[RMDB]
Source: RMDB library TTRDEL, as collected in RNAgym.
An RNA of 177 nucleotides, treated with DMS and 2A3 and read out base by base.
The RNA was probed in 150 mM KOAc, 10 mM MgCl2 and 150 mM bicine (pH 8.5) at 24 C.
Values cover nucleotides 27 to 126.
The 2A3 profile rests on 1,645 reads.
The DMS profile rests on 917 reads.
RNA sequence: GGGAACGACUCGAGUAGAGUCGAAAAGAUAUGGAGCGGGACUUUUGACGCAUUGCGAACUCGGAAACGAGGAGGUAUAAUGCGAUAAGUCUUUCGCUCCUAAGUCAAACGGUUCUUCGGAACCGAACUCAUCUAGUUGCUUCGGCAACUAGAUGAGAAAAGAAACAACAACAACAAC
Reactivity to DMS in 0.01 (KOAc 150mM, MgCl2 10mM, bicine 150mM(pH8.5), 24C), signal-to-noise 1, nucleotides 027 to 126: g030a030u000a300u000g000g000a010g030c000g040g020g000a000c020u000u030u010u000g030a220c040g000c010a020u000u020g000c030g000a050a220c010u000c000g000g000a130a070a190c010g020a020g010g020a070g000g020u000a100u030a000a000u000g000c000g040a060u010a010a020g000u000c000u000u010u010c000g000c030u010c000c010u000a000a100g010u010c010a080a080a190c020g040g000u000u000c000u000u010c230g000g000a000a020c000c000g000a030a100
Reactivity to 2A3 in 0.01 (KOAc 150mM, MgCl2 10mM, bicine 150mM(pH8.5), 24C), signal-to-noise 1, nucleotides 027 to 126: g030a010u070a030u190g000g010a030g010c000g000g010g010a020c020u200u120u060u160g150a060c050g000c000a020u000u100g000c030g090a080a040c010u040c000g030g010a080a050a070c010g000a000g060g040a010g010g170u190a170u080a210a060u030g000c020g040a030u010a070a000g000u000c000u020u170u060c000g000c020u010c000c000u000a000a000g020u010c000a060a060a050c020g010g010u000u010c000u000u050c150g100g020a010a000c020c020g010a020a000